An RNA of 177 nucleotides, treated with DMS and 2A3 and read out base by base. Values cover nucleotides 27 to 126.

[RMDB]
RNA sequence: GGGAACGACUCGAGUAGAGUCGAAAAGAUAUGGAUCCUGUUUAAAUGUCCUUCAGGCUUGGAUUUACUUUUGCUCGGAAACGAGCAAAAGUUGUCAGCCUGAGGACGGUAAACAGGAUCCUAAGUCGUUAAAGCUAUCGUUCGCGAUAGCUUUAACAAAAGAAACAACAACAACAAC
Reactivity to DMS in 0.01 (KOAc 150mM, MgCl2 10mM, bicine 150mM(pH8.5), 24C), signal-to-noise 1, nucleotides 027 to 126: g010a110u010a300u000g010g000a000u000c000c000u000g010u010u000u000a020a100a130u010g000u000c000c000u010u020c020a020g000g010c000u000u010g040g020a010u000u040u000a010c000u000u000u000u000g000c000u000c010g030g000a110a110a230c010g030a010g000c000a000a000a000a000g010u000u000g000u000c000a070g000c000c000u000g010a010g000g000a000c000g000g000u000a010a020a010c000a000g020g010a010u000c000c000u000a020a050g030u000c120
Reactivity to 2A3 in 0.01 (KOAc 150mM, MgCl2 10mM, bicine 150mM(pH8.5), 24C), signal-to-noise 2, nucleotides 027 to 126: g070a020u190a110u140g000g000a010u020c010c000u000g060u030u010u020a220a300a240u170g000u020c000c030u190u280c040a010g000g030c010u180u300g250g050a090u300u300u090a040c000u000u000u000u000g010c000u010c000g070g010a130a160a140c010g000a000g050c020a000a000a000a000g020u020u000g000u010c010a000g000c000c000u000g000a000g010g000a010c010g010g000u030a020a000a000c000a010g000g000a000u000c000c000u000a000a020g010u000c060